Conditions: 150 mM KOAc, 10 mM MgCl2 and 150 mM bicine (pH 8.5), 24 C. Structure probing data (2A3) for a 207-nucleotide construct. Values cover nucleotides 27 to 156. It was measured as part of the RMDB library OK3TST.
[RMDB]
RNA sequence: GGGAACGACUCGAGUAGAGUCGAAAAAAAGCUUGACGACUCCGCGAAGAAAGUGUCAGCGCUGGAACGUAGUAUUCAAUCUGGAGAGCUGACCCUCCGAGAUGUCCAAGCCAGAUCUCAUGAAGAACUCUACGACCUGCUCAACUCUCAGGAACAGCAGGGACAGGUAAUUCGUUACCUGUCCCUGAAAAGAAACAACAACAACAAC
Reactivity to 2A3 in 0.01 (KOAc 150mM, MgCl2 10mM, bicine 150mM(pH8.5), 24C), signal-to-noise 2, nucleotides 027 to 156: a000a010a010g020c040u080u000g030a070c060g010a000c020u010c010c010g050c160g060a110a070g050a120a070a100g130u220g000u070c000a000g020c030g010c010u040g020g000a060a040c090g040u090a050g080u060a300u150u140c060a040a070u000c010u020g040g000a100g030a060g070c000u010g000a000c020c010c000u000c010c050g050a130g000a140u240g010u000c020c020a000a000g010c000c000a030g010a090u000c020u020c020a040u200g060a100a100g000a050a010c020u000c030u070a020c060g040a000c010c000u030g000c020u000c020a000a130c030u010c010u040c030a000g030g120a040a060c010a020g300